[RMDB]
RNA sequence: GGGAACGACUCGAGUAGAGUCGAAAACAUCAGGUCAUCCAUACGGUGCAAGCGGUGCCCAAUUAGUGACUCGAUUAUUUUAUAUGUUUGACAAAGAGACUAUGAUUGCAUCUAUGGGGAUAGGGGGCUUGAGUCUCAUUUUCGAAUGAGACUCAAGAAAAGAAACAACAACAACAAC
Reactivity to 2A3 in 0.01 (KOAc 150mM, MgCl2 10mM, bicine 150mM(pH8.5), 24C), signal-to-noise 6, nucleotides 027 to 126: c030a050u150c040a010g080g040u020c020a100u080c050c000a000u030a050c130g040g000u020g010c020a050a000g070c050g120g060u160g050c030c000c020a020a050u050u040a030g030u020g140a090c000u010c010g010a020u080u040a120u050u260u170u050a180u050a080u130g180u070u150u130g070a080c070a040a130a020g040a020g000a010c020u030a040u170g090a100u010u060g000c000a000u010c010u040a040u030g030g000g020g000a010u080a070g070g000g000g000g000
Reactivity to DMS in 0.01 (KOAc 150mM, MgCl2 10mM, bicine 150mM(pH8.5), 24C), signal-to-noise 4, nucleotides 027 to 126: c060a090u020c080a130g030g020u000c050a100u040c020c020a010u010a060c180g000g010u000g000c010a030a060g000c040g000g010u020g020c020c030c030a080a070u010u020a040g020u010g020a060c030u010c040g010a140u010u030a070u020u000u010u020a050u030a070u050g010u020u000u010g050a140c150a050a110a080g000a080g010a050c000u010a040u020g000a120u020u020g000c010a010u000c010u000a030u010g000g010g000g000a080u000a070g010g000g000g000g010